Overview:
Chemical mapping of a 177-nucleotide RNA with 2A3. It was measured as part of the RMDB library OK1LIB. 2A3 adducts were read by reverse transcription with SuperScript II with manganese. For 2A3, 629 sequencing reads were counted.
RNA sequence: GGGAACGACUCGAGUAGAGUCGAAAAUUGGUGUGAAAUGGUUUGUGGAUCUAACCAAUGGCAAAGAAAGAAAAACAACACCUUAUAGGACAUGUGGACAUUGUAUUCCUUACCCAAUCAUCGACCACCUGCUACUGCCUUUCGAGGCAGUAGCAGGAAAAGAAACAACAACAACAAC
Reactivity to 2A3 in 0.01 (KOAc 150mM, MgCl2 10mM, bicine 150mM(pH8.5), 24C), signal-to-noise 1, nucleotides 027 to 126: u020u000g040g000u030g030u000g060a020a030a010u030g090g020u060u070u130g060u130g080g000a030u000c040u070a060a100c030c020a110a100u040g010g000c080a040a160a070g110a030a040a030g110a030a020a100a000a030c030a020a020c000a080c070c000u110u110a130u080a130g000g000a000c000a190u100g040u010g160g000a040c010a060u000u000g070u170a150u080u080c000c000u050u080a000c000c040c000a040a080u000c000a000u040c010g070a100c020c000a080